[RMDB]
RNA sequence: GGGAACGACUCGAGUAGAGUCGAAAAAUGCAAAUACUGUAUUUUUCUAUAUAGUGCGCAAUAUGUAGGAAUUUGCAGUUAGAUUAGACAGUAUGGGAAGUACACAUGCUGUUUAAUCCCACAAUAACCGGUUGAUGUGAUUCGUCACAUCAACCGGAAAAGAAACAACAACAACAAC
Reactivity to 2A3 in 0.01 (KOAc 150mM, MgCl2 10mM, bicine 150mM(pH8.5), 24C), signal-to-noise 1, nucleotides 027 to 126: a000u150g000c000a000a000a090u100a040c010u000g020u030a000u000u000u000u000u000c000u030a000u000a000u000a010g150u270g180c030g030c100a160a100u070a010u010g020u030a000g000g000a020a000u000u000u020g080c000a000g030u010u010a000g000a020u000u000a000g010a040c000a000g000u000a000u030g000g000g070a300a010g120u110a070c110a000c010a070u000g050c000u000g000u000u000u000a010a000u000c000c040c000a110c020a000a070u170a230a120
An RNA of 177 nucleotides, treated with 2A3 and read out base by base. Reactivities are given for positions 27 through 126. The RNA was probed in 150 mM KOAc, 10 mM MgCl2 and 150 mM bicine (pH 8.5) at 24 C.